[RMDB]
RNA sequence: GGGAACGACUCGAGUAGAGUCGAAAAGAUAUGGAGUGUGUGGUUGGAGCAUCUUCUCGGAAACGAGAAGAUGCUAUGAAGACCCACACUCCUAAGUCAAACGACAGGAGGUUCGCCUCCUGUCGAAUCGUAACAUUAUCUUCGGAUAAUGUUACGAAAAAGAAACAACAACAACAAC
Reactivity to DMS in 0.01 (KOAc 150mM, MgCl2 10mM, bicine 150mM(pH8.5), 24C), signal-to-noise 7, nucleotides 027 to 126: g000a020u000a120u010g000g000a030g020u010g010u000g010u020g060g010u000u000g020g010a060g020c000a010u000c000u000u000c000u000c000g010g000a030a020a080c010g020a010g010a010a010g010a000u000g010c000u000a010u000g010a080a300g000a010c000c000c010a010c010a000c000u000c000c000u000a000a050g000u000c010a120a170a300c050g010a010c000a000g010g010a010g020g020u010u010c300g010c010c010u000c000c000u000g000u000c010g010a020a020
Reactivity to 2A3 in 0.01 (KOAc 150mM, MgCl2 10mM, bicine 150mM(pH8.5), 24C), signal-to-noise 3, nucleotides 027 to 126: g010a000u030a020u070g000g000a010g000u000g010u070g020u300g070g020u050u050g190g170a060g010c000a000u000c010u000u010c000u000c000g000g010a000a030a010c000g000a000g000a010a000g020a000u010g000c000u000a030u050g050a010a030g020a000c010c000c000a000c000a000c000u000c000c000u000a000a000g000u000c010a050a030a080c020g020a000c010a000g000g010a010g000g030u080u230c300g130c090c000u000c000c000u000g000u000c000g000a000a020
Chemical mapping of a 177-nucleotide RNA with DMS and 2A3. For 2A3, 14,281 sequencing reads were counted. For DMS the reverse transcriptase was MarathonRT. Values cover nucleotides 27 to 126. The DMS profile rests on 10,090 reads. The reactions ran in a buffer of 150 mM KOAc, 10 mM MgCl2 and 150 mM bicine (pH 8.5), at 24 C.